[RMDB]
RNA sequence: GGGAACGACUCGAGUAGAGUCGAAAAAUCAGCCUUCGUUCUGUAAACGGGUUUGGAUCCGACUCUCAUAGGCUCUCCAACCCAACUCCUACUCAAUACGUCCUCGUCGUACAGAACGGUAACAUGUAAAACGAAGGCUGCUUCGGCAGCCUUCGAAGUCGUAACAAAACUUCGGUUUUGUUACGACAAAAGAAACAACAACAACAAC
Reactivity to 2A3 in 0.01 (KOAc 150mM, MgCl2 10mM, bicine 150mM(pH8.5), 24C), signal-to-noise 1, nucleotides 027 to 156: a020u070c020a050g030c000c020u010u000c010g030u020u000c010u000g060u070a090a060a180c050g000g050g000u060u050u050g060g000a160u300c000c020g030a070c040u050c000u060c170a140u100a120g010g000c020u000c000u000c000c000a000a000c000c000c000a000a000c010u100c050c000u060a130c040u050c090a070a080u120a180c040g070u060c000c050u100c070g070u050c000g020u010a010c000a000g020a010a000c000g000g010u100a100a060c070a070u160g050u290a030a000a000a120c000g000a000a000g000g150c000u000g010c000u070u090c050g060g000c000a000g000c000c000u000u000c010g000a000a010